The data come from the RNA Mapping Database (RMDB), library OK3TST. Structure probing data (DMS and 2A3) for a 207-nucleotide construct. The DMS profile rests on 2,507 reads. DMS adducts were read by reverse transcription with MarathonRT. Values cover nucleotides 27 to 156.
RNA sequence: GGGAACGACUCGAGUAGAGUCGAAAAGGACCUGUGACCCAGAAGAGCUUGUCAAGAUAUGACAGAACUCUGGAGGUGGACGUUUUGUAUUCGAUUUUGGAACUGCUGAUCUUGCCGUGAGUAAAGAGGCAACAACUCACCCAGCACUGCCACCAGAGUACCUAUCGGUAUUCGUACCGAUAGGUACAAAAGAAACAACAACAACAAC
Reactivity to DMS in 0.01 (KOAc 150mM, MgCl2 10mM, bicine 150mM(pH8.5), 24C), signal-to-noise 1, nucleotides 027 to 156: g040g000a140c010c030u010g030u010g010a110c040c000c000a190g030a200a090g020a020g000c060u000u000g040u000c020a080a220g020a150u020a150u000g010a050c040a080g050a040a040c030u000c040u000g020g020a180g010g040u000g030g010a100c060g020u000u000u000u020g010u000a150u000u010c040g000a260u000u000u000u000g040g000a050a070c070u020g040c060u010g000a030u000c030u000u020g030c060c030g030u000g010a140g020u010a080a070a080g020a140g000g020c050a100a070c100a040a050c010u010c000a070c020c080c000a080g030c010a040c050u020g010c040c040a100c080c010a090g010a280
Reactivity to 2A3 in 0.01 (KOAc 150mM, MgCl2 10mM, bicine 150mM(pH8.5), 24C), signal-to-noise 2, nucleotides 027 to 156: g000g020a050c020c020u050g030u040g040a010c020c010c000a000g040a110a020g020a030g060c060u060u040g030u040c020a030a020g080a300u160a120u150g010a020c000a000g020a060a010c000u000c010u020g040g010a100g020g030u040g010g040a040c050g010u000u000u020u090g030u030a160u020u090c030g030a100u000u030u070u260g030g020a120a040c000u020g010c040u030g000a050u090c030u070u050g040c040c010g000u050g050a020g000u130a010a150a040g060a040g240g030c020a070a030c010a040a010c020u040c010a010c000c030c000a010g010c010a020c060u080g020c000c000a030c000c000a000g010a010

2A3 adducts were read by reverse transcription with SuperScript II with manganese.